[RMDB]
RNA sequence: GGGAACGACUCGAGUAGAGUCGAAAAAAUCUCGAUACAUCAAUGGAGAUUGUACGGUUAACCCAGAAUUACACAAGUGUGCAUAUGUUGCAGAUUCAGGAUAUCAAUAAUGCGCUUAUGAAAGGGAUGAGAGACGUUGAUUCGUCAACGUCUCUCAAAAAGAAACAACAACAACAAC
Reactivity to 2A3 in 0.01 (KOAc 150mM, MgCl2 10mM, bicine 150mM(pH8.5), 24C), signal-to-noise 1, nucleotides 027 to 126: a000a000u040c010u000c100g040a010u020a210c010a110u020c040a130a130u180g160g000a040g010a060u000u150g170u060a040c090g140g000u020u080a040a040c020c000c000a020g080a020a040u120u130a060c050a000c060a000a120g070u040g010u120g180c000a000u000a150u190g020u030u090g020c170a070g040a100u040u080c050a060g180g000a020u060a070u250c010a010a000u070a050a020u010g000c050g120c130u120u160a000u110g140a080a040a080g090g060g050a090
Reactivity to DMS in 0.01 (KOAc 150mM, MgCl2 10mM, bicine 150mM(pH8.5), 24C), signal-to-noise 2, nucleotides 027 to 126: a000a020u000c020u010c000g020a190u000a070c090a050u000c050a110a110u010g020g010a090g000a060u000u000g020u010a040c120g000g000u000u010a050a120c000c000c010a150g010a130a120u000u000a120c050a060c130a070a030g000u010g010u000g000c020a060u000a070u010g010u010u000g030c180a010g010a140u010u000c150a110g000g020a070u000a140u000c020a000a030u010a040a040u000g010c020g000c030u000u000a040u000g020a100a070a040g000g000g000a200